[RMDB]
RNA sequence: GGGAACGACUCGAGUAGAGUCGAAAACGGCUUCACCUCUGACCGCAUCUCCGCUUGGAUGGAGGAGUCCAAGGGUCUCGGCAUUGCCGACAUGAAGAAGCGUGCCGUGCAGCUGAUGGGCCUCGGCUCUGUAGGAUUCUUUCGAGAAUCCUACAGAAAAAGAAACAACAACAACAAC
Reactivity to 2A3 in 0.01 (KOAc 150mM, MgCl2 10mM, bicine 150mM(pH8.5), 24C), signal-to-noise 4, nucleotides 027 to 126: c010g050g000c000u080u040c030a060c030c020u040c050u060g050a060c020c000g010c040a060u030c040u010c030c010g060c100u070u080g050g040a070u040g030g110a110g040g040a060g020u000c020c010a040a030g070g000g030u030c020u020c020g010g000c040a120u040u300g020c000c010g050a030c030a130u300g050a160a150g040a030a000g030c020g020u020g000c000c010g040u020g030c000a020g000c020u060g020a080u120g010g000g030c010c010u000c020g030g000c030
Reactivity to DMS in 0.01 (KOAc 150mM, MgCl2 10mM, bicine 150mM(pH8.5), 24C), signal-to-noise 5, nucleotides 027 to 126: c090g000g010c030u000u000c050a100c040c040u000c060u000g000a090c050c050g010c070a070u010c020u000c030c040g020c080u000u010g000g000a070u000g010g010a090g000g010a150g000u010c010c030a060a070g010g010g010u000c030u000c020g000g010c010a090u000u010g050c010c010g000a100c150a090u010g010a090a080g000a150a120g010c030g020u000g010c010c020g010u000g000c090a110g000c040u000g000a070u000g010g000g010c030c010u000c060g010g010c070
Source information:
This 177-nucleotide RNA was probed chemically with 2A3 and DMS. Values cover nucleotides 27 to 126.